This 177-nucleotide RNA was probed chemically with 2A3 and DMS. The DMS profile rests on 8,262 reads. It was measured as part of the RMDB library TTRDES.

RNA sequence: GGGAACGACUCGAGUAGAGUCGAAAAGAUAUGGAUAUGAAGUAGACAUGAUCGAUUGGGUCGGAAACGACCUAGAGAUCAACAGCUACAUGCAUAUCCUAAGUCAAACGGUGUGUUCGCACACCGAUCCAGAAGAAUACUUCGGUAUUCUUCUGGAAAAAGAAACAACAACAACAAC
Reactivity to 2A3 in 0.01 (KOAc 150mM, MgCl2 10mM, bicine 150mM(pH8.5), 24C), signal-to-noise 6, nucleotides 027 to 126: g030a010u080a050u170g000g000a000u010a000u030g030a050a010g020u020a000g020a060c110a300u270g000a000u000c030g080a090u090u300g010g000g010u000c000g000g030a060a050a040c020g000a010c000c010u000a010g010a010g010a010u000c020a030a030c080a030g030c000u010a000c010a050u300g020c000a000u010a000u010c000c000u000a110a030g040u020c060a140a030a070c020g000g000u020g000u010g010u080u100c300g030c140a000c000a000c000c000g000a030
Reactivity to DMS in 0.01 (KOAc 150mM, MgCl2 10mM, bicine 150mM(pH8.5), 24C), signal-to-noise 7, nucleotides 027 to 126: g000a020u010a300u000g000g000a020u000a000u000g000a050a050g010u000a020g000a060c090a300u010g010a010u000c010g000a300u010u000g020g010g010u000c000g020g000a110a070a190c010g000a010c000c000u000a020g000a300g000a010u000c000a020a080c300a170g010c010u000a010c010a020u000g000c010a000u000a010u000c000c000u000a030a130g010u000c020a110a100a250c020g000g010u000g020u000g010u010u020c240g020c010a010c000a000c000c000g000a050
The 2A3 profile rests on 16,563 reads. The RNA was probed in 150 mM KOAc, 10 mM MgCl2 and 150 mM bicine (pH 8.5) at 24 C. For 2A3 the reverse transcriptase was SuperScript II with manganese.